RNA sequence: GGGAACGACUCGAGUAGAGUCGAAAAACCUGGGGGUGACAUACACCGGAAAACCGUAGAGAUACGGUCCCCCUUGUGGUCGGUGUACAGGUGGUGCAUGGCUGUCGUCAGCUAGUGUCGUGAGAUGAGUAUUUAUGAAAUUCGUUUCAUAAAUACUAAAAGAAACAACAACAACAAC
Reactivity to DMS in 0.01 (KOAc 150mM, MgCl2 10mM, bicine 150mM(pH8.5), 24C), signal-to-noise 9, nucleotides 027 to 126: a060c020c000u010g010g020g000g010g000u010g010a070c130a200u010a050c030a020c010c010g010g000a130a080a140a050c010c010g020u000a000g000a240g010a210u000a000c000g010g000u000c010c020c000c010c040u030u020g020u040g010g010u010c010g000g010u000g010u000a050c130a060g010g010u000g000g000u000g000c040a040u000g000g000c000u000g000u000c010g000u000c010a010g000c010u000a000g020u010g000u000c020g000u010g000a090g010a060u020g000
Reactivity to 2A3 in 0.01 (KOAc 150mM, MgCl2 10mM, bicine 150mM(pH8.5), 24C), signal-to-noise 5, nucleotides 027 to 126: a000c010c000u010g000g000g010g000g010u070g030a000c010a020u120a010c000a010c000c000g030g010a040a060a000a000c000c000g010u010a010g010a000g000a070u010a020c010g010g000u060c000c000c000c000c000u040u230g150u120g040g040u060c010g000g000u010g000u030a070c040a030g040g070u060g030g010u030g030c010a020u040g020g020c010u010g020u050c010g020u030c010a000g000c010u010a000g010u010g000u030c030g030u050g040a110g010a020u050g010

Chemical mapping of a 177-nucleotide RNA with DMS and 2A3. Conditions: 150 mM KOAc, 10 mM MgCl2 and 150 mM bicine (pH 8.5), 24 C. DMS (dimethyl sulfate) methylates the pairing face of unpaired adenines and cytosines.